[RMDB]
RNA sequence: GGGAACGACUCGAGUAGAGUCGAAAACUCCAGUUUUUACUAAGUGCAAAGGACUAUAAACGAGAGCACUUUGUAAAGGAAUGCUCUGUUCGGUAUAUUGCGGUAGUCCCAUACAUGAAAGCAUUCGCUAGUCGUGCUGAUUCGUCAGCACGACUAGAAAAGAAACAACAACAACAAC
Reactivity to DMS in 0.01 (KOAc 150mM, MgCl2 10mM, bicine 150mM(pH8.5), 24C), signal-to-noise 2, nucleotides 027 to 126: c070u020c000c000a110g000u020u020u000u000u050a010c010u000a000a060g000u030g010c000a050a070a170g000g040a090c150u040a100u010a090a110a170c170g000a250g000a300g040c000a010c030u000u000u000g000u010a000a090a020g040g000a050a020u010g000c000u000c190u010g020u000u000c110g000g060u000a050u050a090u000u030g070c060g030g010u000a100g040u000c020c050c060a040u000a060c140a090u040g030a030a170a030g000c010a000u000u010c000g010
Reactivity to 2A3 in 0.01 (KOAc 150mM, MgCl2 10mM, bicine 150mM(pH8.5), 24C), signal-to-noise 2, nucleotides 027 to 126: c000u000c000c000a040g000u100u000u000u000u000a110c060u030a060a000g040u000g000c000a130a060a000g160g000a030c110u190a070u180a300a180a050c190g060a000g010a010g170c000a000c000u010u020u030g010u000a000a060a000g090g010a010a120u060g030c000u000c010u070g060u020u040c050g020g030u080a070u000a000u070u260g140c120g050g080u050a020g070u060c000c050c000a050u120a020c010a010u100g070a150a000a000g000c000a000u050u000c000g040
The record gives the reactivity of an RNA of 177 nucleotides to DMS and 2A3.